This 177-nucleotide RNA was probed chemically with 2A3 and DMS.
Values cover nucleotides 27 to 126.
The DMS profile rests on 985 reads.
RNA sequence: GGGAACGACUCGAGUAGAGUCGAAAACUGAUGCGGAUGGACCGCUCGACGGCGCGGCGAUCGGUCACGGGCGUGGUGAAUGUCACCACCACCGGGUGCGCCACCCCCACCACGGCACCAUUAGCCGCUACGGGAAAACGUUCGCGUUUUCCCGUAGAAAAGAAACAACAACAACAAC
Reactivity to 2A3 in 0.01 (KOAc 150mM, MgCl2 10mM, bicine 150mM(pH8.5), 24C), signal-to-noise 2, nucleotides 027 to 126: c030u070g040a130u300g040c010g110g000a100u080g080g020a070c000c010g060c030u010c020g060a090c070g000g070c060g000c080g010g120c060g080a120u070c070g000g030u040c080a050c140g040g070g050c070g000u000g040g000u020g030a300a240u300g130u290c020a010c000c000a000c000c000a020c010c020g000g010g150u150g040c010g000c010c000a040c020c000c000c000c000a070c030c050a080c010g010g000c000a040c160c040a210u050u100a010g020c000c010g000
Reactivity to DMS in 0.01 (KOAc 150mM, MgCl2 10mM, bicine 150mM(pH8.5), 24C), signal-to-noise 2, nucleotides 027 to 126: c100u020g000a150u000g030c070g000g000a110u000g000g010a020c000c000g010c140u000c010g000a070c100g050g020c080g020c030g000g000c000g000a030u000c010g000g020u000c050a110c180g000g000g000c300g030u000g000g000u060g000a220a150u010g030u000c000a020c030c000a050c050c060a290c010c060g000g020g050u010g030c060g010c040c020a300c050c000c000c000c010a080c130c150a090c020g000g030c030a130c110c110a130u010u000a110g040c020c030g000

2A3 adducts were read by reverse transcription with SuperScript II with manganese. Source: RMDB library OK2TRN, as collected in RNAgym. The reactions ran in a buffer of 150 mM KOAc, 10 mM MgCl2 and 150 mM bicine (pH 8.5), at 24 C.